[RMDB]
RNA sequence: GGGAACGACUCGAGUAGAGUCGAAAAGUCAGUCAACUAGCAGAAAGAAGAAAAGCUAGUGACUGACAGGCAGGCGGAAGCUCAGAGCCUGCCGUAUCCGAUAAGGAUACAAAUGAACUCUGAGCAAAUACGACGUGGAUUUCGAUCCACGUCGUAUAAAAGAAACAACAACAACAAC
Reactivity to DMS in 0.01 (KOAc 150mM, MgCl2 10mM, bicine 150mM(pH8.5), 24C), signal-to-noise 2, nucleotides 027 to 126: g010u000c000a020g000u000c040a020a050c000u000a000g020c000a050g010a100a130a170g000a210a180g020a170a130a150a090g000c020u000a000g000u000g020a000c000u000g000a000c010a000g030g010c010a000g010g000c090g000g000a020a020g030c000u000c000a040g010a060g010c000c000u010g010c010c000g000u000a000u000c010c000g000a110u030a090a140g000g030a100u010a000c030a090a050a060u050g010a040a120c090u010c000u000g000a000g020c010a090a140
Reactivity to 2A3 in 0.01 (KOAc 150mM, MgCl2 10mM, bicine 150mM(pH8.5), 24C), signal-to-noise 4, nucleotides 027 to 126: g000u000c000a000g000u000c000a060a060c090u050a000g000c000a020g250a260a230a070g250a200a040g040a050a110a090a020g000c000u000a000g000u010g000a000c000u000g000a000c000a000g010g000c000a000g020g000c020g030g090a150a040g000c000u010c020a000g000a000g000c000c000u000g000c000c000g000u000a000u020c010c000g010a090u050a290a060g000g000a000u000a000c010a000a030a010u190g000a060a060c020u000c010u030g010a000g000c000a000a060